About this RNA: The record gives the reactivity of an RNA of 177 nucleotides to DMS and 2A3. 2A3 adducts were read by reverse transcription with SuperScript II with manganese. It was measured as part of the RMDB library 15KREP. For 2A3, 6,055 sequencing reads were counted.
[RMDB]
RNA sequence: GGGAACGACUCGAGUAGAGUCGAAAAUCCGUCGUUCCAUCCUUUUCUUACCUUUUGGCCGGCAUGGCCCCAGCCUCCUCGCUGGCGCCGGCUGGGCAACGAUCCGAGGGGACUAUCCCUCUCGAGAGUUCAUUAUCAAGUUCGCUUGAUAAUGAACAAAAGAAACAACAACAACAAC
Reactivity to DMS in 0.01 (KOAc 150mM, MgCl2 10mM, bicine 150mM(pH8.5), 24C), signal-to-noise 5, nucleotides 027 to 126: u000c020c040g020u010c010g010u010u010c020c010a160u020c080c050u000u010u000u000c040u000u000a120c080c050u000u000u000u000g010g010c000c000g010g010c010a050u000g020g030c030c170c000c010a010g010c010c110u010c180c120u010c190g000c010u010g000g010c300g000c010c000g000g000c010u000g000g000g000c020a020a020c300g000a090u000c060c010g000a030g010g000g010g010a160c170u010a140u010c110c000c000u000c000u000c010g010a070g000a150
Reactivity to 2A3 in 0.01 (KOAc 150mM, MgCl2 10mM, bicine 150mM(pH8.5), 24C), signal-to-noise 3, nucleotides 027 to 126: u020c000c010g000u000c000g000u010u010c010c000a100u100c080c030u040u110u090u120c040u060u090a160c040c000u110u100u020u070g190g040c000c000g040g000c070a160u120g030g000c010c030c000c000a010g010c000c020u140c030c010u050c050g000c000u010g010g000c000g000c010c010g010g030c000u010g010g000g010c010a030a020c040g060a050u000c040c000g000a000g000g000g000g000a000c010u100a120u220c000c030c000u030c020u000c010g180a220g010a020